[RMDB]
RNA sequence: GGGAACGACUCGAGUAGAGUCGAAAAGAUAUGGAACUUAUUAGUAUGUAUCGUCAAGAAAGCACAAGCUAGUAUCGGAAACGAUACAGCUGCUUCUUGACGAUACAUACUAAUAAGUUCCUAAGUCCUAACAUCAUACCUUCGGGUAUGAUGUUAGAAAAGAAACAACAACAACAAC
Reactivity to DMS in 0.01 (KOAc 150mM, MgCl2 10mM, bicine 150mM(pH8.5), 24C), signal-to-noise 3, nucleotides 027 to 126: g000a090u010a300u000g000g000a020a010c000u000u000a000u000u000a000g010u010a000u000g010u000a000u000c000g010u010c000a010a000g010a020a030a060g040c020a230c300a300a080g020c010u000a120g040u000a000u010c000g000g010a120a090a220c010g010a000u000a010c000a030g010c000u000g000c000u000u000c000u000u000g000a000c000g000a000u000a000c000a000u000a000c000u000a010a000u000a000a000g010u000u000c000c000u010a010a050g000u000c030